[RMDB]
RNA sequence: GGGAACGACUCGAGUAGAGUCGAAAAGAAAGAAAGAAAGUUCAUUGUUUAUCGGAAACUUUAAACUAUAACCAUUCAAACUUUUCCAGAAGUCAGUUUGAAUAGAAAUUAAAAAGAAACUUCUGAAUAACCUUAUCAUGCUUCGGCAUGAUAAGAACAAAUAACACGUCUUCGGACGUGUUAUUUGAAAAGAAACAACAACAACAAC
Reactivity to 2A3 in 0.01 (KOAc 150mM, MgCl2 10mM, bicine 150mM(pH8.5), 24C), signal-to-noise 1, nucleotides 027 to 156: g030a000a010a000g090a050a110a000g060a050a090a030g000u050u060c030a050u140u080g040u080u100u090a120u170c040g020g030a030a010a020c000u070u050u020a080a090a000c020u020a020u020a230a110c000c000a020u000u000c000a000a000a000c000u050u030u010u000c120c000a000g000a000a000g040u030c010a010g010u020u000u000g010a020a020u100a140g040a020a070a010u180u200a030a090a080a000a000g000a000a030a000c000u000u010c020u050g040a060a140u090a020a020c000c020u000u000a000u000c000a000u000g000c010u010u010c150g040g000c000a000u000g000a000u000a000a000g000a000a000
The record gives the reactivity of an RNA of 207 nucleotides to 2A3. It was measured as part of the RMDB library M2RFPK.